Annotation: This 177-nucleotide RNA was probed chemically with DMS. Values cover nucleotides 27 to 126.

[RMDB]
RNA sequence: GGGAACGACUCGAGUAGAGUCGAAAAUUGUGGUCAAGACCUUGGCGUAGUAUCCAAGGUUGUCAAGGUUCCUAUUGACUUUACAAUGAUUGAGUUUAUGUUAUGGUGUAAGGAUGGACAGGGGAAAUUAGGACCUCAGGUUCGCCUGAGGUCCUAAAAAAGAAACAACAACAACAAC
Reactivity to DMS in 0.01 (KOAc 150mM, MgCl2 10mM, bicine 150mM(pH8.5), 24C), signal-to-noise 1, nucleotides 027 to 126: u010u000g040u000g000g010u000c020a020a070g000a020c000c000u010u010g000g000c130g000u010a140g010u030a200u010c100c040a040a030g000g000u000u000g010u010c060a040a090g010g020u000u000c090c110u000a100u000u000g000a020c010u000u000u010a040c070a030a060u000g010a170u010u000g000a090g000u000u000u000a040u010g010u020u020a080u020g030g010u000g000u010a120a080g000g020a130u010g010g000a100c060a040g000g000g010g010a070a050a110